Structure probing data (2A3 and DMS) for a 177-nucleotide construct.
[RMDB]
RNA sequence: GGGAACGACUCGAGUAGAGUCGAAAAUACGUACCGUUCGCGGUACGUAACUUACCGAGAACCUUGCUCGGUAUAACAAGGAAACCCAUGGAAACAAGGGAACAAGAUUACCCUUCGGGGUAAUCAAUCAAAAACGACGAUUCGUCGUCGUUUUUGAAAAAGAAACAACAACAACAAC
Reactivity to 2A3 in 0.01 (KOAc 150mM, MgCl2 10mM, bicine 150mM(pH8.5), 24C), signal-to-noise 1, nucleotides 027 to 126: u020a000c000g010u000a000c020c010g010u020u010c300g020c000g090g000u000a000c000g010u000a000a010c000u010u010a030c000c020g010a000g030a030a070c000c010u040u010g010c000u010c010g010g070u010a040u040a080a010c050a040a030g100g050a080a090a020c010c020c020a060u120g120g210a100a150a000c000a020a010g000g010g020a030a000c060a130a070g000a040u000u000a010c020c010c000u050u120c260g050g000g030g000u020a000a000u000c000a010a000
Reactivity to DMS in 0.01 (KOAc 150mM, MgCl2 10mM, bicine 150mM(pH8.5), 24C), signal-to-noise 2, nucleotides 027 to 126: u010a000c020g010u000a010c000c010g010u010u000c200g010c000g010g010u000a000c010g010u000a010a060c160u000u010a080c010c010g010a030g000a170a180c030c020u010u000g000c000u000c000g000g000u010a010u000a030a110c200a100a080g000g010a060a070a190c000c000c000a120u030g010g000a090a110a190c050a030a010g010g000g000a150a070c240a060a080g000a000u000u000a010c000c000c000u000u020c190g010g020g000g000u000a000a000u000c000a070a100
The 2A3 profile rests on 1,358 reads.